An RNA of 177 nucleotides, treated with 2A3 and DMS and read out base by base. The 2A3 profile rests on 1,109 reads. The data come from the RNA Mapping Database (RMDB), library RFM100. High 2A3 reactivity points to a flexible backbone, as in loops and unpaired stretches. For DMS, 2,429 sequencing reads were counted. 2A3 adducts were read by reverse transcription with SuperScript II with manganese. The reactions ran in a buffer of 150 mM KOAc, 10 mM MgCl2 and 150 mM bicine (pH 8.5), at 24 C.
RNA sequence: GGGAACGACUCGAGUAGAGUCGAAAAGGGGAAAGAGGCCAGUGCUACAAGGGUUAUCUCACAACCUCAGAUGCUGGAUAAGUCCAAGGAGGCAGAAUCGCUUUUGGAUGACAUUCAGAAAGGCCGGGAGAACUUCCUUGUUCGCAAGGAAGUUCUCAAAAGAAACAACAACAACAAC
Reactivity to 2A3 in 0.01 (KOAc 150mM, MgCl2 10mM, bicine 150mM(pH8.5), 24C), signal-to-noise 2, nucleotides 027 to 126: g000g030g010g010a000a090a000g070a010g000g020c030c000a060g010u030g120c040u060a140c020a090a050g140g010g000u030u070a120u070c160u100c020a080c050a000a070c000c010u010c010a060g000a050u120g050c000u000g000g010a010u040a070a020g010u000c010c010a030a000g180g130a120g230g000c030a040g250a250a200u160c110g000c000u030u000u010u000g010g000a000u010g030a030c040a110u040u030c000a030g130a040a060a000g090g030c000c000g000g090
Reactivity to DMS in 0.01 (KOAc 150mM, MgCl2 10mM, bicine 150mM(pH8.5), 24C), signal-to-noise 2, nucleotides 027 to 126: g000g000g000g000a040a070a020g020a050g000g000c000c000a050g000u030g030c040u010a290c290a030a240g010g000g030u000u030a050u000c110u020c090a060c100a010a030c000c000u010c090a160g040a120u020g000c000u000g000g000a000u030a000a300g030u030c000c000a030a020g000g040a200g000g010c030a080g060a050a130u040c190g010c000u000u000u000u000g010g000a000u000g000a130c230a040u000u000c000a000g010a170a090a050g000g030c020c040g020g000